This 177-nucleotide RNA was probed chemically with DMS and 2A3.

[RMDB]
RNA sequence: GGGAACGACUCGAGUAGAGUCGAAAAGAAUUGGAUAAAAGCCUGCAGUCAUUUUGUAAUUUAGAUAGAAUUUCGACCCUCUCUGUCUGGGGAAUUUAUGAUACUUUCAUCUGCACAGAAUGGAAGGCACGUACUUUACGUUCGCGUAAAGUACGUGAAAAGAAACAACAACAACAAC
Reactivity to DMS in 0.01 (KOAc 150mM, MgCl2 10mM, bicine 150mM(pH8.5), 24C), signal-to-noise 2, nucleotides 027 to 126: g030a150a090u020u010g000g030a120u010a050a080a200a200g010c040c070u000g010c100a080g000u000c030a070u010u010u040u020g000u010a040a090u000u000u000a050g000a050u000a130g010a140a170u000u000u010c050g000a130c060c030c030u000c080u000c110u020g020u030c050u000g030g000g000g000a070a030u000u020u000a060u000g000a130u000a090c020u010u000u000c030a040u000c010u010g000c290a050c160a050g000a070a030u000g010g000a030a040g010g000
Reactivity to 2A3 in 0.01 (KOAc 150mM, MgCl2 10mM, bicine 150mM(pH8.5), 24C), signal-to-noise 1, nucleotides 027 to 126: g050a060a110u180u100g050g010a000u080a140a170a000a020g010c010c010u070g050c000a000g110u070c040a050u070u100u170u040g010u080a150a070u060u150u160a080g010a050u070a040g130a110a060u040u070u000c030g080a040c070c000c000u030c000u020c010u080g110u080c010u000g000g000g010g000a000a050u060u210u140a040u110g040a030u030a080c050u040u000u000c040a030u000c010u040g010c130a090c000a090g070a120a000u020g080g000a010a000g000g000

The RNA was probed in 150 mM KOAc, 10 mM MgCl2 and 150 mM bicine (pH 8.5) at 24 C. The data come from the RNA Mapping Database (RMDB), library OK2TST.